The record gives the reactivity of an RNA of 177 nucleotides to 2A3 and DMS. It was measured as part of the RMDB libraries RFM100 and RFMREP. DMS adducts were read by reverse transcription with MarathonRT. The RNA was probed in 150 mM KOAc, 10 mM MgCl2 and 150 mM bicine (pH 8.5) at 24 C. Values cover nucleotides 27 to 126.
RNA sequence: GGGAACGACUCGAGUAGAGUCGAAAAACUGAGCUACGGCUCAGAAAGCGUGUUAACUGAAUGUGAGGCCUUGUUCUGAAGACCCUUUUCACAAUUUUUGGCAGGCUUAACCGAAGUUAGGCCUUAACCUUAACAGAAGAUUCGUCUUCUGUUAAGGAAAAGAAACAACAACAACAAC
Reactivity to 2A3 in 0.01 (KOAc 150mM, MgCl2 10mM, bicine 150mM(pH8.5), 24C), signal-to-noise 9, nucleotides 027 to 126: a000c000u000g000a000g000c000u020a060c220g110g000c010u000c000a000g030a040a020a000g100c090g030u080g040u140u110a100a060c040u060g090a070a080u110g040u030g060a060g030g000c020c020u070u080g050u160u070c050u090g050a050a040g040a110c020c010c000u070u070u090u120c060a080c060a140a170u090u090u050u120u120g130g010c050a010g000g000c000u010u010a020a010c020c070g040a150a040g030u010u010a010g010g020c000c000u030u060a060a060
Reactivity to DMS in 0.01 (KOAc 150mM, MgCl2 10mM, bicine 150mM(pH8.5), 24C), signal-to-noise 9, nucleotides 027 to 126: a120c010u000g000a010g010c010u000a100c210g050g000c000u000c000a010g010a060a070a080g010c080g010u000g010u010u010a050a090c110u010g000a090a050u010g010u000g010a100g010g010c050c020u010u010g010u020u000c120u010g000a070a060g010a080c040c020c070u000u000u010u000c070a050c110a050a080u000u000u010u000u010g010g020c140a050g000g000c010u000u000a050a070c010c150g010a070a100g010u010u000a030g000g010c050c000u000u010a030a140